[RMDB]
Description: Conditions: 150 mM KOAc, 10 mM MgCl2 and 150 mM bicine (pH 8.5), 24 C. The record gives the reactivity of an RNA of 177 nucleotides to 2A3 and DMS. For DMS the reverse transcriptase was MarathonRT.
RNA sequence: GGGAACGACUCGAGUAGAGUCGAAAACCCCCAUUUGGCUGUAUAUCCAAGGGUUUACGAGCAAAAAUGUUAUGAUUGCAAGGUUCGAAACUUAAUAAAUACCCUAGCGCUUAAAGACACUCACCACGAUUUUCGUAUGUUUCGACAUACGAAAAUCAAAAGAAACAACAACAACAAC
Reactivity to 2A3 in 0.01 (KOAc 150mM, MgCl2 10mM, bicine 150mM(pH8.5), 24C), signal-to-noise 7, nucleotides 027 to 126: c010c010c000c000c010a060u050u060u110g040g000c010u020g030u050a040u010a020u080c020c070a090a090g040g000g000u010u040u030a070c050g030a000g020c020a010a040a120a130a080u090g060u160u120a140u140g170a150u060u140g020c040a060a040g050g000u030u050c020g020a060a030a020c050u050u070a060a020u070a130a150a050u130a070c000c000c000u020a020g000c010g010c040u030u080a070a060a000g040a030c030a010c040u040c010a060c040c000a060c070
Reactivity to DMS in 0.01 (KOAc 150mM, MgCl2 10mM, bicine 150mM(pH8.5), 24C), signal-to-noise 3, nucleotides 027 to 126: c090c010c000c220c050a110u010u020u000g040g000c010u000g000u000a020u000a060u000c050c030a180a120g000g010g020u000u000u020a060c030g000a080g020c040a010a050a060a120a050u020g030u040u040a130u020g010a070u030u010g000c050a070a080g000g010u010u010c070g010a100a060a050c080u020u020a030a070u030a050a060a040u000a070c030c020c020u000a090g010c040g020c080u010u020a030a040a080g000a110c080a030c040u000c040a070c070c060a060c140